[RMDB]
Source: RMDB library OK3TST, as collected in RNAgym.
Chemical mapping of a 207-nucleotide RNA with 2A3 and DMS.
The 2A3 profile rests on 1,664 reads.
DMS adducts were read by reverse transcription with MarathonRT.
RNA sequence: GGGAACGACUCGAGUAGAGUCGAAAAACAGAUAUCUCAAGUGAGUGUGCACAACUUCAUUCACUACAGGUACUGAUGCCUCACUCAACCUAUGGUGAUUAUAGUUGUGUGAAGUUGUGCACAUAACUGCAUUCAUUAUAGUGAGUGUUCGGGCUGACGACUCUAGAAUGUUCGCAUUCUAGAGUCGAAAAGAAACAACAACAACAAC
Reactivity to 2A3 in 0.01 (KOAc 150mM, MgCl2 10mM, bicine 150mM(pH8.5), 24C), signal-to-noise 2, nucleotides 027 to 156: a000c060a000g040a080u100a060u090c030u020c020a060a020g040u030g050a150g050u000g000u010g000c010a000c000a000a010c010u000u000c000a000u000u020c000a000c000u040a000c030a020g000g000u070a070c040u100g040a090u090g040c020c010u030c010a060c000u120c030a030a110c010c020u010a060u140g020g010u000g020a010u030u070a020u020a040g040u020u030g000u000g010u010g000a000a000g010u020u010g000u000g000c000a000c000a000u000a000a000c000u000g000c000a010u000u000c000a000u000u220a090u080a170g080u000g030a000g000u000g000u000u050c040g030g070g000c070u030g020a010
Reactivity to DMS in 0.01 (KOAc 150mM, MgCl2 10mM, bicine 150mM(pH8.5), 24C), signal-to-noise 1, nucleotides 027 to 156: a130c060a160g030a060u000a020u000c010u010c000a120a100g020u000g000a140g040u050g030u000g000c020a120c030a060a090c040u000u000c020a060u000u000c010a010c000u000a030c060a050g050g020u000a180c000u020g020a080u000g000c110c050u010c040a030c080u000c040a060a050c070c040u000a040u000g000g000u010g010a050u020u000a110u000a080g040u010u000g090u010g030u000g010a020a020g000u000u010g010u000g000c020a020c010a020u000a010a040c020u010g000c000a040u000u000c010a020u000u020a090u000a090g010u000g010a040g020u000g000u000u000c050g040g000g010c050u000g020a280